Source information: Chemical mapping of a 177-nucleotide RNA with DMS. The DMS profile rests on 2,376 reads. DMS adducts were read by reverse transcription with MarathonRT.
RNA sequence: GGGAACGACUCGAGUAGAGUCGAAAAUAAAAUCCCAACCUCCCUCCCUCGGUCGGUCGCUCCCUGCGUGCGUGCCUCCGGCCGGCCGGCCCUCCCUCCCUGCGUGCGUGCCUCCCUCCCAAAAAAACAAAAUUAGUGGAUUCGUCCACUAAUUUUGAAAAGAAACAACAACAACAAC
Reactivity to DMS in 0.01 (KOAc 150mM, MgCl2 10mM, bicine 150mM(pH8.5), 24C), signal-to-noise 2, nucleotides 027 to 126: u020a080a060a120a170u020c010c010c010a180a230c080c010u000c030c000c010u000c000c010c060u000c030g020g040u000c020g000g000u000c030g020c090u010c020c020c020u000g010c090g010u000g020c040g020u000g020c010c020u000c050c030g010g020c030c000g010g010c040c010g000g000c020c010c010u000c000c000c020u000c010c000c020u000g000c050g030u000g010c010g000u000g000c010c020u000c000c000c020u010c000c000c010a000a010a050a070a080a060a150